An RNA of 177 nucleotides, treated with DMS and read out base by base.
[RMDB]
RNA sequence: GGGAACGACUCGAGUAGAGUCGAAAAAGCUGCGCGAAAUCGGCGGAAAGGACCCCGCUAUCGGGAGCGGCUAGCAGCGAGGGUUGCCGCUCCAGCCGCGCUAUGAAGCAGGCAUAGCAGAUUUACACAUACGCAGCAUCUUCGGAUGCUGCGUAUGAAAAGAAACAACAACAACAAC
Reactivity to DMS in 0.01 (KOAc 150mM, MgCl2 10mM, bicine 150mM(pH8.5), 24C), signal-to-noise 1, nucleotides 027 to 126: a170g000c010u000g020c000g090c070g100a010a100a210u000c130g010g010c080g000g000a040a050a030g000g020a170c300c160c020c010g000c020u000a090u000c080g010g000g030a060g020c000g000g040c050u010a020g000c030a060g010c140g000a100g040g000g000u000u000g040c020c000g040c010u000c010c020a110g000c050c020g010c120g010c010u000a070u090g000a170a080g000c130a090g000g010c050a060u010a260g000c050a130g000a060u000u000u010a100c210a260
Conditions: 150 mM KOAc, 10 mM MgCl2 and 150 mM bicine (pH 8.5), 24 C.